[RMDB]
RNA sequence: GGGAACGACUCGAGUAGAGUCGAAAAGACCACGUUGCCCUGCCAGAGGCGACCCUGCAGCAACAGCGCCUUCUUGCCCCGCCAGCGCGGAUGCCGCUGCGCCACCGCGGCGAACUUCUGGUCGACGACACAAGAUGUUGUUCGCAACAUCUUGUGUAAAAGAAACAACAACAACAAC
Reactivity to DMS in 0.01 (KOAc 150mM, MgCl2 10mM, bicine 150mM(pH8.5), 24C), signal-to-noise 6, nucleotides 027 to 126: g010a220c020c020a170c130g010u000u000g020c030c020c030u000g010c050c060a090g010a100g020g010c040g010a140c150c080c030u010g020c030a070g000c060a080a090c060a090g010c060g000c050c050u000u010c070u020u000g000c030c010c010c050g000c030c040a080g010c070g010c050g000g010a070u010g010c060c020g010c020u000g010c060g000c050c060a090c090c050g000c040g010g000c020g000a070a070c070u000u000c040u010g000g010u000c050g010a160c130g000
Reactivity to 2A3 in 0.01 (KOAc 150mM, MgCl2 10mM, bicine 150mM(pH8.5), 24C), signal-to-noise 2, nucleotides 027 to 126: g020a000c000c010a030c070g010u050u050g040c000c000c050u010g050c010c010a050g020a030g070g050c040g040a100c030c000c010u050g030c030a060g010c010a010a070c010a050g020c010g030c010c000u060u120c010u050u190g040c010c000c000c030g030c030c020a040g000c040g000c020g070g010a010u090g040c010c020g050c040u030g000c030g010c000c020a050c030c020g030c020g000g000c020g020a050a010c020u080u050c030u030g000g030u020c030g010a050c070g000